Annotation
An RNA of 177 nucleotides, treated with 2A3 and DMS and read out base by base. Conditions: 150 mM KOAc, 10 mM MgCl2 and 150 mM bicine (pH 8.5), 24 C. DMS adducts were read by reverse transcription with MarathonRT.
RNA sequence: GGGAACGACUCGAGUAGAGUCGAAAAUAGCGGUACGUACCGAUCGCUACUACCAUGACAUGCUAUGUAUGAUCUAGAGCAGUACCACUGUAGCUAGGGUACUAUACGUACAGACGUACCGACGUACCCUAAUUAUGCAGUUCGCUGCAUAAUUAGGAAAAGAAACAACAACAACAAC
Reactivity to 2A3 in 0.01 (KOAc 150mM, MgCl2 10mM, bicine 150mM(pH8.5), 24C), signal-to-noise 9, nucleotides 027 to 126: u130a010g030c000g010g000u010a020c010g010u030a090c040c040g030a070u140c080g010c020u020a050c010u030a040c010c070a100u160g060a020c060a090u070g050c040u120a040u260g090u070a100u160g140a170u080c040u070a050g020a020g120c040a010g010u040a120c020c050a120c170u050g010u020a020g010c020u030a010g060g000g010u020a010c000u030a050u030a050c080g000u010a020c010a020g090a030c020g010u000a010c010c000g040a060c030g050u110a090c000
Reactivity to DMS in 0.01 (KOAc 150mM, MgCl2 10mM, bicine 150mM(pH8.5), 24C), signal-to-noise 9, nucleotides 027 to 126: u000a090g020c010g010g010u000a010c040g020u000a300c070c060g000a090u000c070g000c050u000a050c100u000a100c140c040a070u010g010a070c070a090u000g000c090u000a060u010g010u000a050u000g010a100u010c050u000a090g000a110g010c050a030g000u010a080c110c120a100c070u000g010u000a080g010c090u000a110g010g000g010u000a010c020u000a070u000a060c150g000u000a040c080a160g010a050c050g010u000a010c010c010g010a100c130g000u000a080c070